[RMDB]
RNA sequence: GGGAACGACUCGAGUAGAGUCGAAAAGCGUACUACUCGGACCCUCGCUUGGAUUUAUACAGAAACUAUCCCAAAUAGGAUAGCGAAUCUGUAUUGUCAGCGAGCUAACGAGUAUCGCAAACGGCGUUCUAACCGGUUCGCCGGUUAGAACGCCGAAGUAAUUUUAUGAGUUCGCUCAUAAAAUUACAAAAGAAACAACAACAACAAC
Reactivity to 2A3 in 0.01 (KOAc 150mM, MgCl2 10mM, bicine 150mM(pH8.5), 24C), signal-to-noise 1, nucleotides 027 to 156: g000c000g040u090a070c040u000a000c000u030c000g000g060a040c010c000c000u000c000g010c000u120u070g140g020a090u220u300u090a030u050a000c000a020g020a020a040a010c000u000a000u060c030c000c030a190a300a120u300a110g000g000a000u000a000g010c030g030a020a040u000c000u000g000u010a010u010u060g010u010c000a000g000c000g000a000g000c000u030a080a020c000g000a000g000u000a000u060c010g000c020a050a050a000c030g040g010c010g110u000u010c000u000a010a010c060c070g020g010u050u070c290g050c140c000g050g000u000u020a010g010a000a010c000g000c030c020g010a000a000
The record gives the reactivity of an RNA of 207 nucleotides to 2A3. Conditions: 150 mM KOAc, 10 mM MgCl2 and 150 mM bicine (pH 8.5), 24 C.